[RMDB]
RNA sequence: GGGAACGACUCGAGUAGAGUCGAAAAGAAACGUGCGUAGCAACAGUAGGCCGAGUAUCCAACGUUGAUCAUAACAAACGGGUCAUUGGCAAGGCAGGUCGCAACCGCUGGCUGGGCAAGAGGCCUAAGUAUGCAGCUUUUUCGAAAGCUGCAUACUAAAAGAAACAACAACAACAAC
Reactivity to DMS in 0.01 (KOAc 150mM, MgCl2 10mM, bicine 150mM(pH8.5), 24C), signal-to-noise 2, nucleotides 027 to 126: g010a070a100a050c070g020u000g020c040g030u000a090g010c040a040a030c080a100g020u000a120g020g020c070c050g010a060g000u000a050u010c020c060a030a090c180g000u020u010g000a070u010c100a050u000a090a150c200a020a140a110c180g000g000g000u000c020a070u000u010g010g000c100a080a060g030g010c070a090g020g010u000c060g010c080a030a100c050c030g030c090u010g010g000c030u020g000g000g000c070a020a030g010a140g000g010c000c010u000a040